[RMDB]
RNA sequence: GGGAACGACUCGAGUAGAGUCGAAAAAUGAGCGCCAUUCAGGUUGUUGAGAGAGGGAUUGCCGGCGCAGGAAUGAUGUCGGUCAGUGUGCUGCGUAACCCGUCACGUAUGGACGAUGAAGGAUGGGAAACCAUGUCACAUUCGUGUGACAUGGUUUAAAAGAAACAACAACAACAAC
Reactivity to DMS in 0.01 (KOAc 150mM, MgCl2 10mM, bicine 150mM(pH8.5), 24C), signal-to-noise 3, nucleotides 027 to 126: a060u010g020a070g000c060g020c030c020a080u000u000c070a120g050g010u000u000g010u000u010g010a130g000a090g010a090g000g000g000a100u000u000g020c020c040g000g000c070g020c030a050g000g000a070a080u000g000a020u010g010u000c090g020g010u000c070a050g030u000g010u010g000c040u010g000c070g040u000a080a100c030c010c000g000u000c020a060c060g000u000a120u000g000g020a040c080g010a080u000g020a100a100g010g010a030u000g010g000g010
Structure probing data (DMS) for a 177-nucleotide construct. The RNA was probed in 150 mM KOAc, 10 mM MgCl2 and 150 mM bicine (pH 8.5) at 24 C. For DMS the reverse transcriptase was MarathonRT.